The record gives the reactivity of an RNA of 177 nucleotides to DMS and 2A3. For 2A3, 1,211 sequencing reads were counted. High 2A3 reactivity points to a flexible backbone, as in loops and unpaired stretches. DMS adducts were read by reverse transcription with MarathonRT.

RNA sequence: GGGAACGACUCGAGUAGAGUCGAAAAUGAUCUGUCUAGCGUACCAUGCGCUAGAGUACACGAUAUGCUAGCUAGUCGAGGAUCAUAGCAUAUCUAGAGCACUGCGAUCCAUGGUACUCACACUCUAUGAUGGUCCACUAUUCGUAGUGGACCAUCAAAAAGAAACAACAACAACAAC
Reactivity to DMS in 0.01 (KOAc 150mM, MgCl2 10mM, bicine 150mM(pH8.5), 24C), signal-to-noise 2, nucleotides 027 to 126: u000g000a040u000c030u010g010u010c030u000a050g010c080g010u000a100c060c030a060u000g000c030g000c040u040a030g010a030g040u000a130c140a160c140g020a020u010a000u020g000c020u000a040g000c070u010a090g020u000c190g010a160g010g000a040u000c070a130u010a030g000c000a000u000a030u010c000u000a050g000a090g020c060a040c050u000g020c050g010a190u020c130c050a060u010g010g010u000a040c080u010c090a110c220a090c080u000c060u000a100
Reactivity to 2A3 in 0.01 (KOAc 150mM, MgCl2 10mM, bicine 150mM(pH8.5), 24C), signal-to-noise 1, nucleotides 027 to 126: u230g010a060u040c030u110g080u060c070u040a000g000c010g030u000a100c020c020a010u040g000c000g000c050u000a000g010a020g010u040a030c070a000c040g000a000u000a000u000g000c000u000a000g020c040u060a030g110u250c100g120a110g120g130a080u090c030a090u040a000g000c010a000u020a000u000c000u000a030g030a020g030c020a000c070u070g020c080g050a060u000c090c010a030u020g000g000u010a030c030u040c030a030c000a020c060u020c030u050a040
Annotation:
2A3 adducts were read by reverse transcription with SuperScript II with manganese. The data come from the RNA Mapping Database (RMDB), library OK2TRN.